[RMDB]
RNA sequence: GGGAACGACUCGAGUAGAGUCGAAAACAUGGAGUAAGGCAGUCUUUAUUUCGCCUUACAAUUCACAGAAUGCUGUGUCUCGUUCAAUGCUGGGUCUUACCACUCAGACUGUUGAUUCCUCACAGGGUACCGAGAGUCUUCGGACUCUCGAAAAGAAACAACAACAACAAC
Reactivity to DMS in 0.01 (KOAc 150mM, MgCl2 10mM, bicine 150mM(pH8.5), 24C), signal-to-noise 7, nucleotides 027 to 129: c050a110u000g000g110a220g010u030a000a000g000g000c030a000g040u040c230u070u110u070a000u060u050u070c110g010c000c010u020u010a000c040a050a020u040u040c060a050c090a110g050a230a120u030g050c050u040g000u020g020u040c060u030c150g070u000u000c000a060a040u030g000c000u010g060g040g040u020c050u000u090a040c130c190a050c010u000c030a050g020a080c110u050g030u020u020g040a110u060u030c010c050u040c060a120c160a010g070g030g040u050a080c160
Reactivity to 2A3 in 0.01 (KOAc 150mM, MgCl2 10mM, bicine 150mM(pH8.5), 24C), signal-to-noise 9, nucleotides 027 to 129: c050a070u150g110g020a120g010u010a000a010g000g000c040a020g050u090c140u100u300u140a290u080u210u180c060g000c010c000u000u010a000c010a010a050u040u020c040a010c020a040g220a260a130u230g110c030u020g020u010g020u050c020u040c110g110u150u050c040a060a030u050g020c000u010g000g020g010u010c040u050u090a060c020c020a020c030u040c010a020g030a210c020u120g030u050u020g010a090u050u020c010c000u060c010a050c040a040g110g010g030u040a060c050